Structure probing data (2A3) for a 207-nucleotide construct. The 2A3 profile rests on 1,133 reads. The reactions ran in a buffer of 150 mM KOAc, 10 mM MgCl2 and 150 mM bicine (pH 8.5), at 24 C.
[RMDB]
RNA sequence: GGGAACGACUCGAGUAGAGUCGAAAAGAACACUGUAUCAACACCUUUAACAAUCUGGAGGUCCAUGCAUGUCAGUUGUCAACAGGCAAUAAUGAUGAGCACACCUUAUAUGACAGCCUUAAUCUACUGCUUUUCUAGGUAUCAAGGUCUAAUGCAACGUCAAGAAGGAGUUCGCUCCUUCUUGACGAAAAGAAACAACAACAACAAC
Reactivity to 2A3 in 0.01 (KOAc 150mM, MgCl2 10mM, bicine 150mM(pH8.5), 24C), signal-to-noise 3, nucleotides 027 to 156: g110a070a030c110a000c070u090g000u070a120u100c010a010a090c000a180c050c040u030u120u220a080a030c080a020a100u060c060u080g080g000a000g000g000u000c060c070a020u090g000c010a030u120g020u030c000a000g010u000u050g020u000c010a110a070c100a300g020g020c020a010a000u150a110a140u090g070a020u020g060a010g000c010a030c000a010c060c000u020u090a110u030a020u210g100a050c070a040g000c000c000u050u080a050a070u050c010u060a030c010u010g030c010u020u070u050u040c020u040a040g000g010u020a040u110c040a020a040g040g010u020c040u110a100a060u090g060c000a030a060